RNA sequence: GGGAACGACUCGAGUAGAGUCGAAAAGAUAUGGAUUGACCCAUCUUCAAGUGGCUUUGAUCUCGGAAACGAGGGAGCCAUGAAGAGAUGCAAUCCUAAGUCAAAGUGGUCACUUCGGUGACCACAAGUUGUUCUUGAUCUUCGGAUCAAGAACAACAAAAGAAACAACAACAACAAC
Reactivity to DMS in 0.01 (KOAc 150mM, MgCl2 10mM, bicine 150mM(pH8.5), 24C), signal-to-noise 2, nucleotides 027 to 126: g000a030u000a300u010g000g040a000u000u000g020a190c210c200c050a090u000c030u000u000c020a050a300g020u000g010g010c000u040u010u040g000a050u020c010u010c000g010g000a160a090a190c010g000a050g000g000g000a000g010c000c000a020u000g000a150a090g050a010g000a000u000g020c010a000a020u000c000c020u010a010a100g000u000c040a060a080a100g010u000g000g010u000c000a000c000u000u000c120g040g020u000g000a000c000c000a010c020a010a050
Reactivity to 2A3 in 0.01 (KOAc 150mM, MgCl2 10mM, bicine 150mM(pH8.5), 24C), signal-to-noise 1, nucleotides 027 to 126: g030a020u070a010u160g030g000a030u050u040g100a200c100c070c000a090u010c010u080u060c080a300a100g000u030g080g010c070u300u230u160g140a140u140c010u020c020g030g000a070a050a050c020g010a040g000g010g000a000g030c000c000a000u040g000a010a010g000a000g010a010u030g020c000a010a000u000c010c000u030a220a010g070u060c070a000a000a180g020u000g000g000u000c000a000c020u070u110c300g100g000u000g000a000c080c000a000c000a000a020